[RMDB]
RNA sequence: GGGAACGACUCGAGUAGAGUCGAAAAAUCAUGCACAGAUGGAGCGACAAAGCGAAGCGCCAGAUGCUCGACGCUCAGCAGGGCAAGAAGAACGUCAAGACGGUCCGAGAUCCGCAGGCAGACUACGAAUCUUCGAUGUACCGGAUUGCGACCGAGGCGUGCACAUCAUAUUCGUAUGAUGUGCACGAAAAGAAACAACAACAACAAC
Reactivity to DMS in 0.01 (KOAc 150mM, MgCl2 10mM, bicine 150mM(pH8.5), 24C), signal-to-noise 3, nucleotides 027 to 156: a060u000c030a090u000g020c030a140c050a140g000a140u010g000g020a050g020c020g030a240c060a150a090a100g010c030g030a100a160g000c030g000c040c030a140g050a150u000g020c030u000c000g010a090c010g010c020u010c010a190g000c040a220g010g000g000c070a030a090g000a090a090g020a060a040c030g000u010c020a070a110g000a140c040g010g010u000c020c020g000a060g000a040u000c000c010g010c010a020g000g000c140a190g010a300c020u050a020c000g020a010a020u000c010u000u000c090g020a080u020g030u000a050c030c040g000g000a150u010u000g000c030g010a220c010c020g000a220g000g020
Reactivity to 2A3 in 0.01 (KOAc 150mM, MgCl2 10mM, bicine 150mM(pH8.5), 24C), signal-to-noise 5, nucleotides 027 to 156: a000u080c060a050u110g020c010a020c010a110g130a150u050g040g010a020g010c020g110a080c070a060a100a000g020c040g110a090a010g010c020g060c040c040a040g060a130u170g020c010u010c020g060a030c030g010c010u020c010a010g050c020a010g020g010g000c040a010a040g040a030a010g050a110a030c020g040u060c070a030a030g060a030c020g010g010u020c020c010g020a020g010a040u020c010c010g010c030a020g070g050c060a070g080a140c010u060a050c070g060a050a080u030c020u130u090c130g060a090u130g020u050a050c020c020g010g000a010u010u040g040c060g010a010c020c010g010a030g010g060

Chemical mapping of a 207-nucleotide RNA with DMS and 2A3.
High DMS reactivity at an A or C suggests that its Watson-Crick edge is free.
The reactions ran in a buffer of 150 mM KOAc, 10 mM MgCl2 and 150 mM bicine (pH 8.5), at 24 C.
DMS adducts were read by reverse transcription with MarathonRT.